[RMDB]
RNA sequence: GGGAACGACUCGAGUAGAGUCGAAAAGAUAUGGAUGAUUAGGCUUUUGACGCCUUCCUCGGAAACGAGAAGGCGAUAAGCCUGGGUCAUCCUAAGUCAAACACCGACUGCUUCGGCAGUCGGUGAAGUGUAACUAUCUGUUCGCAGAUAGUUACACAAAAGAAACAACAACAACAAC
Reactivity to DMS in 0.01 (KOAc 150mM, MgCl2 10mM, bicine 150mM(pH8.5), 24C), signal-to-noise 5, nucleotides 027 to 126: g010a030u000a270u020g000g000a000u010g010a020u000u000a030g000g010c000u000u000u010u010g010a220c040g010c000c000u000u000c150c050u000c010g010g010a070a070a110c000g010a010g000a030a010g010g010c000g020a040u000a020a060g010c000c010u000g010g010g010u000c000a000u000c000c010u000a020a070g010u010c030a140a110a260c010a020c000c000g000a020c000u000g000c000u000u010c230g020g000c000a000g010u000c000g000g000u000g000a000a030
Reactivity to 2A3 in 0.01 (KOAc 150mM, MgCl2 10mM, bicine 150mM(pH8.5), 24C), signal-to-noise 4, nucleotides 027 to 126: g010a010u040a020u100g000g000a000u000g000a010u020u050a010g010g010c020u150u190u220u300g170a090c020g000c000c000u000u000c030c050u000c000g000g030a060a050a030c010g000a010g000a000a000g000g000c010g010a010u040a060a000g000c010c000u000g030g020g020u020c000a010u000c000c000u000a070a010g030u010c030a070a080a060c010a000c000c000g010a000c010u000g020c000u030u040c050g190g000c000a000g010u010c010g000g000u000g000a010a000